[RMDB]
RNA sequence: GGGAACGACUCGAGUAGAGUCGAAAAUCGUUGAACCCGGCGUACGCAUCCGCUUGCAGCACACCGCUGAAGCAGGCAAGAUGAGUCUGCGGAUGGAUGCCUUUUCUGUCCGGGCUGUAAGCGAACCACACUGCAGGUGCCAACGCUGACCCUGCAAUGAUCGUGGAUAUUUCGAUAUCCACGAUCAAAAAGAAACAACAACAACAAC
Reactivity to DMS in 0.01 (KOAc 150mM, MgCl2 10mM, bicine 150mM(pH8.5), 24C), signal-to-noise 1, nucleotides 027 to 156: u000c010g030u020u000g020a080a030c000c010c000g000g040c030g010u010a070c110g040c010a040u000c020c060g010c000u000u000g000c030a070g010c090a230c060a110c040c080g050c040u000g000a130a260g050c070a080g010g000c000a140a050g020a130u010g000a140g040u000c000u000g010c010g000g000a090u000g000g020a020u020g000c040c030u130u000u000u000c040u000g010u020c010c000g010g000g010c000u080g030u000a100a090g000c000g000a090a200c050c000a100c140a130c170u010g010c010a080g040g000u020g020c030c020a070a170c070g020c180u010g000a120c000c020c010u000g030c000a050a300
Reactivity to 2A3 in 0.01 (KOAc 150mM, MgCl2 10mM, bicine 150mM(pH8.5), 24C), signal-to-noise 4, nucleotides 027 to 156: u030c010g000u000u020g020a040a030c000c000c000g000g030c020g020u070a040c090g000c010a000u010c010c000g020c130u110u190g020c010a000g020c030a030c030a060c080c100g000c020u050g020a070a040g020c070a020g000g000c010a060a030g110a270u220g030a060g050u000c000u020g020c020g050g010a090u120g020g000a000u010g000c000c010u150u260u120u020c080u110g200u070c000c010g000g000g000c010u020g050u000a000a010g000c000g000a020a030c010c010a040c010a020c130u040g000c000a000g010g050u120g110c030c040a180a050c140g030c270u060g050a100c010c000c000u000g000c020a030a060